[RMDB]
RNA sequence: GGGAACGACUCGAGUAGAGUCGAAAAGCGACAUACAAAAUACACCAGGGCGUGGAAGUACUCGCGAGCGCGGGGGGGCAGCCAUACCGCGUAAAGGGUAAUGGCGCUGACGCUCUCCUCCACCCACGAAGAUAGCGGCUUUCGAGCCGCUAUCUUCAAAAGAAACAACAACAACAAC
Reactivity to 2A3 in 0.01 (KOAc 150mM, MgCl2 10mM, bicine 150mM(pH8.5), 24C), signal-to-noise 1, nucleotides 027 to 126: g000c000g040a130c080a200u240a000c130a000a300a090a020u110a100c050a080c000c000a120g180g000g000c070g070u010g030g040a000a180g000u130a000c030u000c010g060c140g000a060g020c050g030c080g000g000g000g000g120g000g000c000a020g000c020c020a000u000a000c000c000g140c000g200u170a110a040a030g050g000g000u170a300a160u000g010g000c040g000c060u070g000a070c030g000c000u000c000u020c000c000u130c000c000a120c040c000c000a020c040
This 177-nucleotide RNA was probed chemically with 2A3. Reactivities are given for positions 27 through 126. Source: RMDB library OK1LIB, as collected in RNAgym.